Chemical mapping of a 177-nucleotide RNA with 2A3 and DMS.

[RMDB]
RNA sequence: GGGAACGACUCGAGUAGAGUCGAAAAAGCAACGAGUGUGUGUGGGACGUUUUAUCCCAAGCACUGAGUAGAGCACGCGCUCACACACACCGCGAGCGAGCAUCAGCAGAGCGCAAACGCUGGUAAAAGCUUCAUGCUAGUUCGCUAGCAUGAAGCUAAAAGAAACAACAACAACAAC
Reactivity to 2A3 in 0.01 (KOAc 150mM, MgCl2 10mM, bicine 150mM(pH8.5), 24C), signal-to-noise 1, nucleotides 027 to 126: a000g120c070a070a050c000g030a050g040u000g010u000g000u020g000u000g020g000g050a020c000g010u100u010u110u140a130u090c000c070c000a010a000g060c040a000c060u040g070a040g070u110a000g010a020g110c060a010c000g060c000g000c010u000c010a050c000a000c000a000c030a010c010c000g030c020g030a020g000c010g000a010g080c000a020u030c030a000g000c040a030g000a060g140c080g020c130a050a030a020c080g000c040u010g050g000u090a070a080a000
Reactivity to DMS in 0.01 (KOAc 150mM, MgCl2 10mM, bicine 150mM(pH8.5), 24C), signal-to-noise 2, nucleotides 027 to 126: a080g000c020a200a060c030g000a300g020u000g020u000g020u010g000u000g000g010g000a090c030g020u000u000u000u000a110u000c010c000c010a070a030g010c110a060c060u000g020a080g020u000a060g010a110g000c150a070c050g000c150g010c000u010c000a000c020a010c010a020c010a020c010c020g020c050g010a190g020c030g000a070g010c140a080u000c010a010g010c020a150g000a110g030c050g020c100a000a030a090c110g000c030u010g000g020u010a080a040a110
For DMS, 1,100 sequencing reads were counted.
Values cover nucleotides 27 to 126.
For 2A3 the reverse transcriptase was SuperScript II with manganese.